Conditions: 150 mM KOAc, 10 mM MgCl2 and 150 mM bicine (pH 8.5), 24 C. This 177-nucleotide RNA was probed chemically with 2A3 and DMS. For 2A3, 12,326 sequencing reads were counted. DMS adducts were read by reverse transcription with MarathonRT. Source: RMDB library OK1LIB, as collected in RNAgym.

RNA sequence: GGGAACGACUCGAGUAGAGUCGAAAAGAAUAUAAGAGCGCAGUAAUUGUGAGAGCAAACUGCGCCCGGACUGUAGGAUCCGGUGGCACAGCAACGCUCACUCACAACACGCUGUGCCACAUGAAGAAUUAUCCUAAUCCUUCGGGAUUAGGAUAAUAAAAGAAACAACAACAACAAC
Reactivity to 2A3 in 0.01 (KOAc 150mM, MgCl2 10mM, bicine 150mM(pH8.5), 24C), signal-to-noise 9, nucleotides 027 to 126: g040a080a030u210a000u060a150a040g030a020g010c000g000c010a010g010u110a190a200u050u050g000u030g040a040g010a010g040c040a020a010a040c000u000g000c000g000c000c000c000g010g000a010c030u150g090u270a080g060g120a100u000c000c000g000g000u010g000g000c000a000c000a010g010c010a030a130c120g040c050u070c040a060c030u140c020a090c020a090a130c040a040c160g000c000u000g000u000g000c010c000a010c010a020u120g030a030a060g060a050
Reactivity to DMS in 0.01 (KOAc 150mM, MgCl2 10mM, bicine 150mM(pH8.5), 24C), signal-to-noise 7, nucleotides 027 to 126: g020a140a100u050a060u030a070a040g000a100g000c000g000c000a010g010u010a070a100u000u000g000u000g020a180g000a130g000c020a030a070a070c010u010g010c000g010c000c000c000g000g000a050c080u010g020u030a100g000g000a220u000c000c000g020g020u000g010g000c000a000c000a000g000c010a150a110c190g020c060u000c080a080c120u020c210a120c210a070a080c200a060c180g010c000u000g010u010g000c010c000a010c020a040u030g010a080a120g010a130